This 207-nucleotide RNA was probed chemically with 2A3. For 2A3, 577 sequencing reads were counted. 2A3 adducts were read by reverse transcription with SuperScript II with manganese. The RNA was probed in 150 mM KOAc, 10 mM MgCl2 and 150 mM bicine (pH 8.5) at 24 C. Source: RMDB library M2RFPK, as collected in RNAgym.
[RMDB]
RNA sequence: GGGAACGACUCGAGUAGAGUCGAAAAGGUGCUCUGAAUGGAGUGCUCUACUGAGAUUAUAAAAUAGAAGGUAAGCUAUUAUCUCUUACAACAGGGCAAGGCUUGUUGGAAUAGGCGGUAAAGUCUAAAAACUACCUCACCUUCGGGUGAGGUAGAACGGAUUCUAACAGUUCGCUGUUAGAAUCCGAAAAGAAACAACAACAACAAC
Reactivity to 2A3 in 0.01 (KOAc 150mM, MgCl2 10mM, bicine 150mM(pH8.5), 24C), signal-to-noise 1, nucleotides 027 to 156: g070g000u020g000c000u010c010u060g110a140a140u180g010g010a000g000u050g000c000u040c060u080a030c090u080g000a020g000a040u060u150a050u300a120a150a080a060u170a070g110a150a010g090g050u080a030a000g020c030u000a040u150u000a010u250c040u050c020u000u080a030c010a050a000c000a040g060g000g010c020a050a010g020g000c010u040u030g010u010u010g000g000a050a090u040a040g000g080c060g060g020u170a180a000a000g040u010c040u040a050a050a000a000a050c000u000a000c000c000u000c000a000c000c000u010u040c160g030g000g000u000g000a000g000g000u000a000g000a000a000